Conditions: 150 mM KOAc, 10 mM MgCl2 and 150 mM bicine (pH 8.5), 24 C. The record gives the reactivity of an RNA of 177 nucleotides to 2A3 and DMS. For DMS, 49,393 sequencing reads were counted. For 2A3, 89,679 sequencing reads were counted.
[RMDB]
RNA sequence: GGGAACGACUCGAGUAGAGUCGAAAAGAUGAGAUACAGGUCGCAGAGAGAGUGCAAGGGGAGUUGUCGCUUCACUCUCUCAAGGCAAGUGAAGCAGGACAGGACCCUUCAUAACUUGUAUCUCAGAGAUAGGUGAGUUGUUCGCAGCUUAUCUAUCAAAAGAAACAACAACAACAAC
Reactivity to 2A3 in 0.01 (KOAc 150mM, MgCl2 10mM, bicine 150mM(pH8.5), 24C), signal-to-noise 9, nucleotides 027 to 126: g130a060u060g000a000g000a000u000a000c000a000g020g030u050c050g040c180a010g050a020g020a010g010a030g190u060g040c110a020a010g030g030g020g010a180g090u120u050g050u060c020g000c030u000u000c000a000c000u030c000u000c010u020c040a010a020g030g000c080a050a010g010u000g000a000a000g010c080a050g070g080a020c030a050g060g110a090c000c000c000u000u010c030a040u040a100a020c000u000u000g000u000a000u000c000u000c000a000g000a000
Reactivity to DMS in 0.01 (KOAc 150mM, MgCl2 10mM, bicine 150mM(pH8.5), 24C), signal-to-noise 9, nucleotides 027 to 126: g010a130u010g010a010g000a000u000a000c000a010g000g000u000c130g010c090a110g000a150g010a120g010a110g020u010g000c150a050a010g000g010g000g010a180g000u020u010g000u010c010g000c000u000u000c000a000c000u000c050u000c080u030c150a030a090g010g020c230a100a070g010u000g000a010a000g010c080a110g000g000a050c070a100g000g000a240c040c030c000u000u000c070a030u030a130a050c010u000u000g000u000a000u000c000u000c000a010g000a110